[RMDB]
Structure probing data (2A3 and DMS) for a 177-nucleotide construct.
Reactivities are given for positions 27 through 126.
DMS (dimethyl sulfate) methylates the pairing face of unpaired adenines and cytosines.
For 2A3, 1,612 sequencing reads were counted.
RNA sequence: GGGAACGACUCGAGUAGAGUCGAAAAAAAAAAAUAGAACCAUAUGGAUGAAAAAGUUCGGGGUUAGCCUUGGCUAUAGGUGGACCAAAACCGAUUAACCAUACAUUUGGCCACCAACCCCGGAUCAGGCUUAAAAUAGUUUCGACUAUUUUAAGCCAAAAGAAACAACAACAACAAC
Reactivity to 2A3 in 0.01 (KOAc 150mM, MgCl2 10mM, bicine 150mM(pH8.5), 24C), signal-to-noise 2, nucleotides 027 to 126: a000a000a000a000a000a000a000u080a000g030a020a010c020c020a050u030a130u300g090g020a050u060g080a100a160a020a000a000g020u010u000c000g000g000g010g000u000u020a000g040c000c030u040u260g240g020c020u020a030u110a180g030g000u020g010g020a120c000c000a000a000a050a130c070c090g030a020u060u140a070a020c070c020a020u050a220c040a040u110u000u000g000g000c000c000a010c000c000a020a000c030c000c000c000g030g000a000u000c010a000
Reactivity to DMS in 0.01 (KOAc 150mM, MgCl2 10mM, bicine 150mM(pH8.5), 24C), signal-to-noise 2, nucleotides 027 to 126: a020a040a030a090a080a080a180u010a020g040a260a170c030c020a140u070a100u000g000g000a100u000g000a070a000a020a110a050g000u030u000c020g000g010g000g010u030u010a010g000c000c000u020u010g050g010c000u010a080u020a050g010g000u000g000g000a170c010c000a000a010a040a140c150c080g000a110u020u000a130a070c200c070a170u000a030c220a230u010u000u010g000g000c000c000a050c040c020a180a140c000c000c000c000g020g000a000u020c070a070

Conditions: 150 mM KOAc, 10 mM MgCl2 and 150 mM bicine (pH 8.5), 24 C.